[RMDB]
RNA sequence: GGGAACGACUCGAGUAGAGUCGAAAAAGUUCAUAUGCCCACCUUUGCUUGUCGUCGGGUGGAUGCCUCAUGGUGCUAUGAAUGCCUAUAAUUGAAAUAUUAUAGAUGCCUAAUUUUCCUCUCUUGAGGAAAAUUAGAUGCAUACAAGGGUGAAGCAAGUCAUCCCAUUAUUCGUAAUGGGAUGACUAAAAGAAACAACAACAACAAC
Reactivity to DMS in 0.01 (KOAc 150mM, MgCl2 10mM, bicine 150mM(pH8.5), 24C), signal-to-noise 2, nucleotides 027 to 156: a150g010u000u000c030a110u000a080u000g030c030c000c010a090c090c010u010u000u000g010c020u010u000g030u010c060g040u010c130g030g000g000u000g010g020a090u000g010c010c010u010c040a260u010g010g010u010g030c000u000a180u000g010a070a100u010g020c050c020u000a020u000a030a040u010u000g000a140a090a160u010a040u000u000a070u000a040g010a100u000g000c020c000u000a010a020u000u000u010u020c010c000u000c000u020c290u010u000g010a020g000g010a000a010a010a000u000u010a000g000a100u000g010c030a040u000a040c090a060a100g010g000g000u000g010a100a070g020c040a170
Reactivity to 2A3 in 0.01 (KOAc 150mM, MgCl2 10mM, bicine 150mM(pH8.5), 24C), signal-to-noise 2, nucleotides 027 to 156: a000g050u080u060c020a010u020a020u250g000c000c010c000a010c010c000u130u090u120g060c080u160u100g100u200c090g020u000c060g060g000g020u030g010g030a110u060g020c000c010u110c050a100u250g040g000u010g000c010u020a050u150g040a060a050u090g010c020c000u070a080u020a050a030u000u020g080a090a080a070u140a050u040u050a030u050a070g030a030u000g020c010c000u000a000a000u000u000u020u020c000c000u040c020u060c060u160u300g000a000g000g000a000a000a000a000u000u010a000g000a010u030g000c000a000u030a090c020a020a060g040g010g040u120g040a050a000g060c040a070
Chemical mapping of a 207-nucleotide RNA with DMS and 2A3. DMS adducts were read by reverse transcription with MarathonRT. The DMS profile rests on 3,066 reads. The data come from the RNA Mapping Database (RMDB), library OK3TST.